Conditions: 150 mM KOAc, 10 mM MgCl2 and 150 mM bicine (pH 8.5), 24 C. Chemical mapping of a 177-nucleotide RNA with DMS and 2A3. The data come from the RNA Mapping Database (RMDB), library OK1LIB.
RNA sequence: GGGAACGACUCGAGUAGAGUCGAAAACGAACACCCGAUGUUCAAAGCCAUGGCCGCGAGUUCGUCAUCGGAGGCCGAGCACGGUGACGGGGAAGUCGAGGAGUCCGGCGAGGAGUUGACCGCCGCGGCGGGGUAGUCGUUUCGACGACUACCCCGCAAAAGAAACAACAACAACAAC
Reactivity to DMS in 0.01 (KOAc 150mM, MgCl2 10mM, bicine 150mM(pH8.5), 24C), signal-to-noise 1, nucleotides 027 to 126: c140g000a150a060c120a070c040c060c190g000a120u020g000u000u000c070a110a190a150g020c060c020a050u000g000g010c020c040g010c030g000a120g020u010u010c050g000u000c000a010u040c000g000g040a210g010g000c030c030g000a000g010c020a080c000g000g000u050g000a030c050g000g010g020g000a100a120g010u000c000g000a200g030g030a070g000u000c000c020g030g020c020g010a180g000g000a060g000u000u020g010a140c010c180g000c050c030g000c000g000
Reactivity to 2A3 in 0.01 (KOAc 150mM, MgCl2 10mM, bicine 150mM(pH8.5), 24C), signal-to-noise 2, nucleotides 027 to 126: c050g010a020a000c010a040c020c090c020g030a100u130g060u060u040c040a070a060a020g020c020c020a090u110g050g050c020c050g050c010g000a010g030u090u080c060g040u010c010a040u030c050g010g040a080g010g060c030c010g030a010g000c060a040c060g010g030u040g020a010c000g000g050g000g010a040a000g120u020c010g000a050g030g020a000g060u010c030c030g000g000c000g030a070g050g020a130g000u070u060g030a060c000c010g020c010c000g010c100g000